[RMDB]
RNA sequence: GGGAACGACUCGAGUAGAGUCGAAAAGCUGGGAGGAAAGACGGACAAAAAUGGCUUGAGGGGCGAUGCCUAUUGAAUGCCGCCAAAAGCGUCGGCGCAAAUUGAAUCGCUCUAUGAGCGCGCCGAAGCUAAUCGGAGUAUUCGUACUCCGAUUAGCAAAAGAAACAACAACAACAAC
Reactivity to DMS in 0.01 (KOAc 150mM, MgCl2 10mM, bicine 150mM(pH8.5), 24C), signal-to-noise 4, nucleotides 027 to 126: g020c050u000g000g010g010a050g010g000a050a100a100g020a080c060g000g000a030c080a010a070a060a100a080u000g010g000c030u000u010g010a220g010g010g020g000c050g030a080u010g000c070c020u010a130u010u010g000a070a070u000g010c010c010g000c020c070a050a110a090a150g010c110g010u000c000g020g010c020g010c040a040a080a170u000u000g020a170a090u000c050g010c010u000c020u010a090u000g010a030g020c030g000c020g000c010c010g000a040a100
Reactivity to 2A3 in 0.01 (KOAc 150mM, MgCl2 10mM, bicine 150mM(pH8.5), 24C), signal-to-noise 3, nucleotides 027 to 126: g020c020u040g030g000g020a030g010g040a060a020a000g030a020c020g040g010a000c060a030a130a040a050a050u100g040g010c010u040u070g040a100g010g020g000g000c010g010a010u100g060c010c020u090a110u040u100g040a080a040u120g020c000c020g000c010c000a110a120a000a020g030c030g000u020c010g000g040c000g030c020a060a110a050u080u140g050a070a020u080c030g000c000u000c010u060a140u300g030a010g020c040g000c000g000c000c010g010a020a010